[RMDB]
RNA sequence: GGGAACGACUCGAGUAGAGUCGAAAACUGAUAGCCUUCGGGCUAUCAGAAAAAAGCGUACUACGUGUAUAAGCCGUUUGACGUCCUCCCAAAUAGGAGGACCGAGGAACUACUUAGUACACGUAUCGCAAAAAAGGACCAGGUUCGCCUGGUCCAAGAUAUUUGAUUUCUUCGGAAAUCAAAUAUCAAAAGAAACAACAACAACAAC
Reactivity to DMS in 0.01 (KOAc 150mM, MgCl2 10mM, bicine 150mM(pH8.5), 24C), signal-to-noise 2, nucleotides 027 to 156: c000u010g010a020u000a010g000c000c000u010u000c300g070g020g020c000u000a000u020c010a020g000a010a040a060a120a130a070g010c000g020u010a050c100u000a010c010g030u000g020u000a030u000a010a010g020c000c080g020u020u000u000g000a300c130g000u000c000c010u000c000c040c000a050a130a210u000a050g020g010a030g020g010a000c000c000g010a300g000g020a000a000c020u000a020c000u000u000a050g070u000a020c010a010c010g010u000a030u000c000g000c020a000a020a080a080a180a110g020g000a050c010c000a020g010g020u000u000c300g020c030c000u000g020g000u000c000c000a000a090
Reactivity to 2A3 in 0.01 (KOAc 150mM, MgCl2 10mM, bicine 150mM(pH8.5), 24C), signal-to-noise 3, nucleotides 027 to 156: c000u000g000a000u000a000g010c000c040u040u110c300g070g020g000c000u020a000u000c000a000g000a030a010a000a000a010a000g030c040g030u070a080c050u000a000c030g000u000g010u010a010u000a010a010g010c010c020g040u000u000u050g020a010c010g000u000c000c000u080c000c020c030a240a300a080u300a110g000g000a000g000g010a000c000c000g030a050g080g160a000a000c000u040a000c000u010u030a050g140u030a140c020a000c010g000u000a010u090c020g000c000a090a100a050a000a000a030g000g000a000c000c000a010g020g040u040u040c180g100c050c000u000g010g000u000c000c000a000a010